The record gives the reactivity of an RNA of 207 nucleotides to 2A3 and DMS. For 2A3, 4,016 sequencing reads were counted. The reactions ran in a buffer of 150 mM KOAc, 10 mM MgCl2 and 150 mM bicine (pH 8.5), at 24 C. Values cover nucleotides 27 to 156. 2A3 is a SHAPE reagent: it acylates the 2'-hydroxyl of flexible nucleotides of all four kinds. For 2A3 the reverse transcriptase was SuperScript II with manganese.
[RMDB]
RNA sequence: GGGAACGACUCGAGUAGAGUCGAAAAGGGGUCAAGCUUCGAGGGAUCGCGCAAGCUUGGAUUUACAAGCUGAAGCCUCCACGGCUUGUUGUCAGCUUGCCGAUCCCUAAGACAGAGCUUGACGGAGGCACCCAAAAUCCUUCCUUCGGGAAGGAAACCGUAAAUACUACUUCGGUAGUAUUUACGGAAAAGAAACAACAACAACAAC
Reactivity to 2A3 in 0.01 (KOAc 150mM, MgCl2 10mM, bicine 150mM(pH8.5), 24C), signal-to-noise 2, nucleotides 027 to 156: g060g000g030g020u000c000a000a000g000c000u030u030c020g010a010g000g010g000a000u000c000g000c040g000c150a010a030g010c080u300u300g070g000a050u250u220u160a010c000a000a000g000c000u020g010a080a000g010c000c010u010c000c010a010c020g000g000c000u000u000g000u000u000g030u040c120a070g000c000u000u000g000c000c040g010a000u000c000c000c000u010a010a000g000a000c000a000g020a000g000c000u000u000g000a000c000g000g000a000g000g000c000a030c010c000c000a020a080a010a080u030c000c000u010u000c000c010u030u050c240g090g000g000a000a000g010g000a010a060a000
Reactivity to DMS in 0.01 (KOAc 150mM, MgCl2 10mM, bicine 150mM(pH8.5), 24C), signal-to-noise 1, nucleotides 027 to 156: g000g130g020g030u000c000a000a000g000c000u000u010c030g000a050g060g020g020a020u000c000g070c190g000c010a060a010g030c020u010u000g010g030a070u010u000u010a060c000a020a020g000c000u010g010a070a170g020c010c010u000c040c020a300c040g000g000c010u000u000g000u000u010g000u020c050a080g010c010u000u010g000c020c000g000a030u000c000c000c000u010a030a040g010a100c300a090g000a030g000c000u000u000g010a020c000g000g010a020g080g060c030a140c000c010c000a050a100a060a170u010c000c000u000u000c000c000u000u010c300g060g030g000a040a010g040g000a000a010a000